[RMDB]
RNA sequence: GGGAACGACUCGAGUAGAGUCGAAAAUAAGCCUCGAAACCGCUUGUGUCCAUGCUCGCGGUGUAGAGUCACUAUCAUGGAAUCGCGCUGGGUGGCUGCCUGUCAGUCCGGCACUAGAACACAACAGGCUGGUUCCCGGAUGCGCUUUGCACGCCGUAGGCAACAUAAAGUUCGCUUUAUGUUGCCUAAAAGAAACAACAACAACAAC
Reactivity to 2A3 in 0.01 (KOAc 150mM, MgCl2 10mM, bicine 150mM(pH8.5), 24C), signal-to-noise 4, nucleotides 027 to 156: u150a040a010g080c000c000u010c020g060a080a020a010c000c000g010c010u030u010g020u000g030u040c030c040a040u070g010c000u020c020g020c010g010g020u020g000u010a020g000a020g030u010c010a040c140u140a070u300c020a010u030g030g030a030a030u070c020g000c010g000c030u010g000g010g010u050g060g020c020u010g020c010c000u030g030u010c010a020g030u020c020c010g040g030c010a030c030u070a040g100a190a030c070a000c010a160a000c000a000g010g020c000u040g090g080u010u040c000c010c010g020g020a070u060g010c030g040c090u110u080u150g070c070a030c140g030c010c010g040u030
Reactivity to DMS in 0.01 (KOAc 150mM, MgCl2 10mM, bicine 150mM(pH8.5), 24C), signal-to-noise 2, nucleotides 027 to 156: u000a100a190g010c060c000u000c010g030a170a170a070c010c040g020c010u010u010g030u010g030u000c060c030a030u000g000c020u000c200g030c000g010g020u020g020u000a210g020a100g010u020c130a150c120u010a090u010c020a050u000g000g000a050a040u000c060g010c030g000c020u020g010g010g020u000g020g020c010u000g030c040c000u000g000u000c050a260g010u000c020c020g000g000c020a070c090u010a100g020a070a070c090a080c030a090a060c010a050g000g020c010u000g000g010u000u000c010c010c000g000g000a130u000g020c000g010c100u010u000u010g010c010a040c010g000c000c000g010u000